Structure probing data (2A3 and DMS) for a 177-nucleotide construct.
For 2A3, 3,707 sequencing reads were counted.
For 2A3 the reverse transcriptase was SuperScript II with manganese.
Reactivities are rounded to 0.1 and cut off at 0 and 3.
Source: RMDB library RFMREP, as collected in RNAgym.
Conditions: 150 mM KOAc, 10 mM MgCl2 and 150 mM bicine (pH 8.5), 24 C.
[RMDB]
RNA sequence: GGGAACGACUCGAGUAGAGUCGAAAAUCUCUGUGUUCUGAUUAUGUGAGAGCCAGGACAGGCUAAACAUUUGCUACAUUAAGACCAUGCAUGUGUACCCAGAUGUAGCCCAUUCCCUAGCUCUGGUGUAUAACUUCAACUUCGGUUGAAGUUAUACAAAAGAAACAACAACAACAAC
Reactivity to 2A3 in 0.01 (KOAc 150mM, MgCl2 10mM, bicine 150mM(pH8.5), 24C), signal-to-noise 3, nucleotides 027 to 126: u030c020u000c040u040g040u010g040u090u010c040u050g080a160u110u240a120u240g100u100g110a070g000a010g040c000c010a030g000g030a040c040a030g000g000c010u050a110a150a000c020a020u010u030u060g010c000u010a030c000a030u110u090a130a030g040a050c060c040a060u200g030c040a040u120g080u010g020u060a050c000c020c000a000g010a020u030g010u030a000g000c020c000c000a050u060u050c010c000c000u000a020g030c000u000c000u050g060g010u010
Reactivity to DMS in 0.01 (KOAc 150mM, MgCl2 10mM, bicine 150mM(pH8.5), 24C), signal-to-noise 3, nucleotides 027 to 126: u000c070u000c020u000g010u010g010u000u000c020u000g000a150u000u000a100u000g010u000g010a040g020a050g020c000c020a020g010g000a070c280a130g000g000c020u000a050a120a080c040a030u000u010u010g020c180u000a020c010a040u000u000a130a090g000a050c090c140a060u000g000c110a100u010g020u010g000u000a030c150c150c020a040g000a010u000g010u010a060g010c010c060c050a250u000u010c070c000c000u000a110g010c090u000c030u000g010g010u010